[RMDB]
RNA sequence: GGGAACGACUCGAGUAGAGUCGAAAAAGUCUGUUUACCGUUAUUGGCUUUAAUGCCCAGGCUAACGAACAUCAUCAUGAAACCAUGAGCGAAGCACAACCACAGGUUAUUAGCGCCACUGGCGUGGAUUGAUGGGUAACUUCGGUUACCCAUCAAUAAAAGAAACAACAACAACAAC
Reactivity to DMS in 0.01 (KOAc 150mM, MgCl2 10mM, bicine 150mM(pH8.5), 24C), signal-to-noise 4, nucleotides 027 to 126: a040g010u010c040u010g020u000u010u000a140c080c080g020u010u010a080u000u010g000g000c010u010u000u010a080a030u000g030c010c010c030a090g000g000c050u010a070a060c130g010a050a070c110a040u000c050a100u000c030a030u000g000a130a090a080c150c050a050u010g000a040g020c080g020a080a090g000c060a070c120a050a100c050c040a050c090a090g000g010u010u000a070u000u000a140g010c100g020c030c030a050c180u000g010g010c050g020u000g000g010
Reactivity to 2A3 in 0.01 (KOAc 150mM, MgCl2 10mM, bicine 150mM(pH8.5), 24C), signal-to-noise 2, nucleotides 027 to 126: a000g030u000c020u030g140u070u100u100a200c030c030g030u100u060a120u140u100g000g000c000u080u080u180a090a060u230g030c020c000c000a010g020g030c000u060a070a030c060g070a010a010c020a070u060c010a020u000c000a020u040g050a120a140a030c070c000a040u050g000a010g080c070g050a040a000g010c040a010c020a090a030c020c010a050c010a070g030g040u070u130a050u080u110a070g000c020g010c010c030a170c170u120g060g000c010g000u030g000g080

The record gives the reactivity of an RNA of 177 nucleotides to DMS and 2A3.
For 2A3 the reverse transcriptase was SuperScript II with manganese.
The RNA was probed in 150 mM KOAc, 10 mM MgCl2 and 150 mM bicine (pH 8.5) at 24 C.
DMS adducts were read by reverse transcription with MarathonRT.
Reactivities are rounded to 0.1 and cut off at 0 and 3.
Source: RMDB library OK2TST, as collected in RNAgym.
The 2A3 profile rests on 1,940 reads.